[RMDB]
RNA sequence: GGGAACGACUCGAGUAGAGUCGAAAAACGUAGCGGUGUAAUUCGCUUGUUCAGAAACUGCGGGAAUUCCUUCAUGCGCUCUGAUCACCUGAACAUGCAAGCGGGGCUGGGCGAUGAGCCGACUGACCCAGUUCUCAUGUUUCGACAUGAGAACUGGAAAAGAAACAACAACAACAAC
Reactivity to DMS in 0.01 (KOAc 150mM, MgCl2 10mM, bicine 150mM(pH8.5), 24C), signal-to-noise 2, nucleotides 027 to 126: a090c050g030u010a080g030c010g020g040u000g030u020a090a130u000u000c070g000c020u000u000g000u000u020c030a030g010a100a120a060c050u010g000c030g020g000g000a160a100u030u000c040c020u000u000c020a090u000g000c090g010c050u010c040u000g010a080u010c060a090c040c010u000g000a050a050c110a050u000g000c100a080a090g010c030g050g010g010g000c060u000g000g000g010c030g000a080u000g010a150g020c020c030g000a070c080u010g010a170c120
Reactivity to 2A3 in 0.01 (KOAc 150mM, MgCl2 10mM, bicine 150mM(pH8.5), 24C), signal-to-noise 2, nucleotides 027 to 126: a050c080g050u040a020g000c000g050g050u040g010u120a090a180u110u070c000g000c000u030u060g050u030u010c020a030g040a130a160a030c050u100g000c060g020g000g090a040a140u160u140c020c000u090u030c050a080u170g050c010g060c040u000c030u050g070a130u070c040a050c090c030u040g020a100a050c030a030u220g000c110a100a000g020c010g020g010g000g030c030u100g040g030g080c040g030a050u040g020a000g040c010c020g060a060c030u020g040a020c000